[RMDB]
Chemical mapping of a 177-nucleotide RNA with 2A3 and DMS.

RNA sequence: GGGAACGACUCGAGUAGAGUCGAAAAAUUAACCCAGCCUAAAUGAAGAGCAGGACAAAAGGUUCGUCUGCUAACACUCCAUGGUAGACAGAGGAUGGGGAAAUGGAUGUGGACUAUUUGGAAGUAACUACAUUGAAUCUUUCGAGAUUCAAUGUAGAAAAGAAACAACAACAACAAC
Reactivity to 2A3 in 0.01 (KOAc 150mM, MgCl2 10mM, bicine 150mM(pH8.5), 24C), signal-to-noise 5, nucleotides 027 to 126: a010u070u060a050a070c000c000c000a020g010c020c020u110a140a150a110u140g060a050a080g010a010g080c030a020g020g060a030c030a020a190a010a040g110g000u090u110c060g030u020c020u000g000c000u010a070a010c030a010c030u000c020c010a020u050g020g010u040a030g040a050c040a010g080a040g110g010a070u090g010g010g010g040a020a050a040u080g020g000a050u100g030u050g040g020a030c030u050a090u090u070u050g050g020a040a030g020u040a070a040
Reactivity to DMS in 0.01 (KOAc 150mM, MgCl2 10mM, bicine 150mM(pH8.5), 24C), signal-to-noise 6, nucleotides 027 to 126: a080u010u000a090a150c020c010c000a170g000c060c040u000a040a080a070u000g010a100a090g010a070g010c020a030g010g010a060c080a080a090a110a110g010g010u000u000c100g000u010c010u000g000c010u010a060a100c090a090c060u000c040c030a040u010g000g000u010a060g000a040c060a070g010a090g010g010a060u000g000g000g000g000a060a070a040u000g000g000a040u000g020u000g000g000a100c090u000a060u010u000u000g010g000a070a080g000u010a060a150
Reactivities are given for positions 27 through 126.